[RMDB]
Overview
Structure probing data (2A3 and DMS) for a 177-nucleotide construct. For DMS the reverse transcriptase was MarathonRT. Conditions: 150 mM KOAc, 10 mM MgCl2 and 150 mM bicine (pH 8.5), 24 C.
RNA sequence: GGGAACGACUCGAGUAGAGUCGAAAAGAUAUGGAUGCGAUAGGCUUCGAUGAUCUACCUCGGAAACGAGGUAGAUUAGAAGCUAUUCGCAUCCUAAGUCAAAAGUCUUAUCCUUCGGGAUAAGACAUCGUAAGCACAUGUUCGCAUGUGCUUACGAAAAAGAAACAACAACAACAAC
Reactivity to 2A3 in 0.01 (KOAc 150mM, MgCl2 10mM, bicine 150mM(pH8.5), 24C), signal-to-noise 1, nucleotides 027 to 126: g020a020u080a060u120g000g000a000u030g020c000g000a020u030a180g180g000c000u050u010c060g300a300u300g000a000u000c000u000a010c000c000u000c000g000g040a120a100a070c000g010a000g030g010u020a000g000a000u010u010a010g000a000a000g000c000u000a000u010u010c010g000c010a000u010c000c000u000a000a000g000u000c010a000a000a030a290g010u000c000u000u000a000u000c000c040u010u030c300g150g000g010a000u010a010a000g000a020c010a040
Reactivity to DMS in 0.01 (KOAc 150mM, MgCl2 10mM, bicine 150mM(pH8.5), 24C), signal-to-noise 2, nucleotides 027 to 126: g020a050u000a300u000g000g010a000u000g000c000g000a000u000a280g010g010c000u020u020c000g010a190u020g000a020u000c000u000a020c000c000u000c000g000g000a170a090a200c010g040a010g000g000u000a010g010a000u000u000a150g010a050a000g020c000u010a130u020u010c000g030c000a000u010c000c000u000a020a120g000u010c050a090a110a130a110g020u020c000u000u000a000u000c000c000u000u020c280g030g000g040a000u000a000a000g020a010c000a010